[RMDB]
RNA sequence: GGGAACGACUCGAGUAGAGUCGAAAAGAUAUGGACAAAGAACUACCUGAACGGUACCUGAUGACCUAAUUGUGUCGGAAACGACACAAUUAGCAAGGGUAUGAAAGCCAGGCUUUGUCCUAAGUCACCGUAUACCAUUCUUCGGAAUGGUAUACGGAAAAGAAACAACAACAACAAC
Reactivity to 2A3 in 0.01 (KOAc 150mM, MgCl2 10mM, bicine 150mM(pH8.5), 24C), signal-to-noise 2, nucleotides 027 to 126: g010a010u040a000u080g000g000a040c020a000a060a000g000a120a230c130u120a090c300c020u030g020a180a050c160g270g000u020a010c000c000u200g060a300u190g100a210c010c010u000a000a000u010u010g000u000g010u000c010g000g020a040a020a000c010g010a000c000a000c020a010a000u000u000a000g000c010a070a240g040g030g020u050a010u070g300a300a050a010g190c130c000a000g020g050c010u000u000u020g010u060c000c000u010a020a000g010u010c020a030
Reactivity to DMS in 0.01 (KOAc 150mM, MgCl2 10mM, bicine 150mM(pH8.5), 24C), signal-to-noise 2, nucleotides 027 to 126: g030a010u000a180u030g000g010a030c000a010a010a030g010a090a040c040u010a300c000c010u000g000a060a110c140g010g020u010a000c010c000u020g020a150u000g010a090c300c000u000a000a010u010u000g010u000g030u000c000g030g020a040a070a110c000g010a040c010a010c020a000a000u000u000a000g000c050a040a140g000g010g050u000a000u020g020a070a040a220g030c190c010a010g010g000c020u000u000u000g000u020c000c000u000a010a090g010u010c030a300